[RMDB]
RNA sequence: GGGAACGACUCGAGUAGAGUCGAAAAACGGGCAGUGCGCUUCUGAUGGGCCUGACCUGGUUUCGACAGGGGGAGAUAGGGUCGUGAGGCAACUCGUCAGAGAAGACGUUAAAACUAAAUCGAAGUACACAGAUCUACAGUUCGCUGUAGAUCUGUGAAAAGAAACAACAACAACAAC
Reactivity to 2A3 in 0.01 (KOAc 150mM, MgCl2 10mM, bicine 150mM(pH8.5), 24C), signal-to-noise 8, nucleotides 027 to 126: a000c010g000g030g000c020a030g010u120g170c090g040c090u130u090c070u240g210a270u220g020g050g000c000c000u040g020a110c000c010u010g020g020u000u010u050c030g010a020c020a050g060g030g000g010g010a080g030a100u130a100g010g010g030u010c020g030u040g010a140g030g030c010a030a070c030u010c040g000u000c000a010g020a020g030a300a000g000a020c030g010u020u020a010a000a000a000c010u010a010a020a070u140c080g050a130a000g030u030a030
Reactivity to DMS in 0.01 (KOAc 150mM, MgCl2 10mM, bicine 150mM(pH8.5), 24C), signal-to-noise 3, nucleotides 027 to 126: a050c010g000g000g020c020a010g010u000g010c050g000c020u010u030c160u020g010a080u050g010g000g030c010c030u030g010a070c000c000u010g000g000u000u000u000c040g010a100c030a110g000g020g000g010g030a040g030a080u020a260g010g000g010u000c020g000u010g000a180g000g010c080a120a090c100u020c000g000u010c010a040g010a270g000a060a020g000a010c000g000u040u090a000a010a030a000c020u000a060a120a090u040c080g000a040a040g020u010a160